The data come from the RNA Mapping Database (RMDB), library OK1LIB. This 177-nucleotide RNA was probed chemically with 2A3 and DMS. Conditions: 150 mM KOAc, 10 mM MgCl2 and 150 mM bicine (pH 8.5), 24 C. The 2A3 profile rests on 5,093 reads.
[RMDB]
RNA sequence: GGGAACGACUCGAGUAGAGUCGAAAAUUUCAAUCUAUCCAUGAUCAUAGCGGAUAAAGCAAUAUCUCCAACAAAGAGUGAACUGGUACGUUCGAUCAAGGCUCGCAAUACGGUCAUGGAUCCGGACGACAACAACCUAGUUCGCUAGGUUGUUGUCAAAAGAAACAACAACAACAAC
Reactivity to 2A3 in 0.01 (KOAc 150mM, MgCl2 10mM, bicine 150mM(pH8.5), 24C), signal-to-noise 6, nucleotides 027 to 126: u050u050u060c040a040a080u020c010u090a010u000c010c000a020u000g000a010u000c020a060u090a090g020c020g090g040a110u140a120a150a000g010c010a040a050u050a090u210c040u020c030c030a120a140c040a060a300a040g050a010g050u090g010a020a040c020u120g140g130u240a110c140g010u040u050c010g010a020u080c110a060a030g100g000c000u000c030g000c010a040a040u060a170c150g010g000u000c010a020u020g000g020a000u000c000c020g070g060a050c070
Reactivity to DMS in 0.01 (KOAc 150mM, MgCl2 10mM, bicine 150mM(pH8.5), 24C), signal-to-noise 2, nucleotides 027 to 126: u010u000u010c060a140a150u030c080u000a030u000c010c000a030u010g000a010u010c030a140u020a130g000c040g000g000a120u020a020a130a040g020c060a120a100u020a110u020c010u000c010c060a100a140c300a050a150a060g000a060g000u020g000a030a010c060u000g020g000u020a050c100g050u000u000c020g010a040u100c130a090a140g000g000c010u010c000g000c000a020a110u010a120c240g000g000u000c000a040u010g010g000a010u010c050c090g070g000a070c270